[RMDB]
RNA sequence: GGGAACGACUCGAGUAGAGUCGAAAAAGCACUGGUACGAUACGUCGUACCAGUACAGUCGUUGGGAUGGAACGCAAUUAAAUACAUGUGUGACGUGUAUUUGCGAACGACGUAAUUAUUUUUCAAAAUCACGCUAUCGUGUUCGCACGAUAGCGAACCUGUGCUAGUGCUUCGGCACUAGCACAGGAAAAGAAACAACAACAACAAC
Reactivity to 2A3 in 0.01 (KOAc 150mM, MgCl2 10mM, bicine 150mM(pH8.5), 24C), signal-to-noise 1, nucleotides 027 to 156: a000g170c100a090c070u030g000g000u000a000c020g000a000u050a100c300g090u040c000g010u000a000c000c000a000g000u010a000c000a000g030u000c020g000u000u070g050g100g150a070u130g150g060a220a000c000g000c010a000a100u150u110a090a120a000u110a020c000a000u010g070u070g210u300g190a010c020g030u020g000u000a000u000u000u040g000c050g000a030a070c020g010a000c050g000u010a000a040u110u080a080u080u130u000u020u040c050a000a000a000a000u130c120a060c060g030c000u000a000u010c000g000u010g000u100u030c070g120c030a000c000g000a000u000a060g000c000g000a000a000